[RMDB]
RNA sequence: GGGAACGACUCGAGUAGAGUCGAAAAAUGGAAUGACUAUCAAGGUUAUGAGAAAACAUUCGAAUAUUUCAACAAAUCGAUUGAAAAUUUACAAACUGAUUAUCUUGAUUUAUUUCUAAUACAUUGGGUACUGGCGGGUAUUCGUACCCGCCAGUACAAAAGAAACAACAACAACAAC
Reactivity to 2A3 in 0.01 (KOAc 150mM, MgCl2 10mM, bicine 150mM(pH8.5), 24C), signal-to-noise 1, nucleotides 027 to 126: a000u100g010g010a000a000u070g000a030c100u000a000u070c000a000a000g000g020u000u070a000u000g100a050g000a030a220a000a000c000a000u080u080c000g160a000a100u020a240u020u120u190c050a020a030c000a000a090a020u100c030g070a100u000u000g020a000a000a000a170u150u030u030a250c120a000a080a130c050u150g020a050u000u000a000u120c000u040u000g000a040u000u010u010a000u000u110u000c030u050a070a000u300a300c100a150u070u040g250g050